[RMDB]
Structure probing data (DMS and 2A3) for a 177-nucleotide construct. For 2A3, 1,133 sequencing reads were counted. For DMS, 1,773 sequencing reads were counted. DMS (dimethyl sulfate) methylates the pairing face of unpaired adenines and cytosines.
RNA sequence: GGGAACGACUCGAGUAGAGUCGAAAAUCAAACGAUUUCGAUCGUUUGAAACGGACCACUCCUGCGGGUGUUAAGGCCAUACGGACAGCCGGGUCCACUGCCAGUCAUUCGGUUUCGACCGAAUGAAUUGCAUGCGUAUGUUCGCAUACGCAUGCAAAAAAGAAACAACAACAACAAC
Reactivity to DMS in 0.01 (KOAc 150mM, MgCl2 10mM, bicine 150mM(pH8.5), 24C), signal-to-noise 2, nucleotides 027 to 126: u010c000a010a000a020c000g010a000u000u000u020c190g000a030u000c000g020u000u010u000g000a010a090a110c190g010g000a040c010c010a210c050u000c010c040u000g020c170g030g030g040u000g010u000u010a100a060g000g020c020c030a080u030a110c160g010g000a030c040a150g000c050c000g000g010g010u000c010c030a100c210u030g000c000c040a070g010u000c000a010u000u000c000g020g010u010u000u030c180g000a020c000c000g000a000a000u000g000a020a060
Reactivity to 2A3 in 0.01 (KOAc 150mM, MgCl2 10mM, bicine 150mM(pH8.5), 24C), signal-to-noise 1, nucleotides 027 to 126: u020c000a020a000a000c010g030a030u040u080u200c220g040a000u020c010g010u030u010u040g000a010a010a000c060g020g020a000c000c000a030c040u020c000c000u050g070c250g050g000g020u020g060u120u200a090a040g060g010c000c000a090u120a080c060g020g050a060c000a000g000c020c010g030g020g000u000c040c000a000c060u050g070c030c010a030g070u010c000a000u000u010c000g010g020u060u010u070c230g070a020c010c000g020a010a010u010g000a030a060